Chemical mapping of a 177-nucleotide RNA with DMS and 2A3. The reactions ran in a buffer of 150 mM KOAc, 10 mM MgCl2 and 150 mM bicine (pH 8.5), at 24 C. Values are in units of 0.01, from 0 to 300, in steps of 10. For DMS the reverse transcriptase was MarathonRT.

RNA sequence: GGGAACGACUCGAGUAGAGUCGAAAACAGCAGAGAGCUAAAGGAGCCUGAAUGCCUAUGAAAUUCAAAAUGUGCCAUACUGGUCUUGUGCUACAUAUCUCUGGAAUUCUUAUGCAUGGCACGUAAAAGGCUAGUUCGUAUUCGUACGAACUAGCCUAAAAGAAACAACAACAACAAC
Reactivity to DMS in 0.01 (KOAc 150mM, MgCl2 10mM, bicine 150mM(pH8.5), 24C), signal-to-noise 1, nucleotides 027 to 126: c020a080g020c010a110g000a100g000a040g060c150u010a030a080a160g000g010a040g060c010c050u020g000a040a060u000g000c000c030u060a030u000g040a050a030a090u000u000c190a040a050a040a080u000g000u000g010c030c000a010u000a020c010u010g010g020u000c030u000u000g000u020g030c030u000a030c080a030u000a070u000c020u000c050u030g010g010a020a150u010u000c070u000u010a030u010g030c050a000u000g010g030c000a010c000g030u010a050a140a070
Reactivity to 2A3 in 0.01 (KOAc 150mM, MgCl2 10mM, bicine 150mM(pH8.5), 24C), signal-to-noise 1, nucleotides 027 to 126: c020a000g130c100a010g000a010g020a010g070c030u100a070a100a120g020g040a050g090c000c000u030g000a160a000u060g060c000c020u220a190u170g090a050a020a080u170u140c030a070a000a000a260u030g020u000g000c000c000a010u000a060c030u050g050g050u040c040u060u080g030u130g020c010u040a040c000a120u170a100u080c040u000c010u050g010g050a040a100u140u020c030u130u110a050u090g010c050a020u010g070g060c020a020c000g100u170a030a110a050